Source information: An RNA of 177 nucleotides, treated with 2A3 and DMS and read out base by base. The RNA was probed in 150 mM KOAc, 10 mM MgCl2 and 150 mM bicine (pH 8.5) at 24 C. DMS adducts were read by reverse transcription with MarathonRT.

[RMDB]
RNA sequence: GGGAACGACUCGAGUAGAGUCGAAAAGAGGCCUUUCAGGUACCGCGCCCAUGUGAAAAGCCAAUGGACCCACCUGAGUGCAUCAGUCCUCUACGGCUAUUGGCUAGCGUCUCUGAAACGCGCGAGCUACGCUGUCUCACUUCGGUGAGACAGCGUAAAAAGAAACAACAACAACAAC
Reactivity to 2A3 in 0.01 (KOAc 150mM, MgCl2 10mM, bicine 150mM(pH8.5), 24C), signal-to-noise 1, nucleotides 027 to 126: g120a010g110g000c000c020u050u110u070c040a010g010g000u020a090c020c000g010c030g070c070c000c000a070u100g140u070g060a060a030a120a000g000c000c010a010a010u050g160g090a300c040c000c000a010c130c030u040g000a000g040u220g070c030a180u220c070a240g050u170c030c000u080c020u070a020c040g000g000c050u020a010u010u060g000g000c000u040a040g010c020g020u020c000u000c000u130g100a070a080a070c000g030c020g000c030g000a030g120c070
Reactivity to DMS in 0.01 (KOAc 150mM, MgCl2 10mM, bicine 150mM(pH8.5), 24C), signal-to-noise 1, nucleotides 027 to 126: g000a100g000g020c040c000u000u000u000c040a070g030g030u000a110c210c120g000c090g040c000c060c120a080u140g050u010g000a100a170a040a010g010c000c000a000a000u000g000g000a120c000c020c050a020c300c060u010g000a000g030u110g000c040a300u030c040a000g000u130c030c000u000c000u010a150c300g070g000c000u000a000u000u000g000g030c000u010a000g000c300g000u000c080u070c050u000g000a030a060a040c270g000c000g000c110g010a280g010c000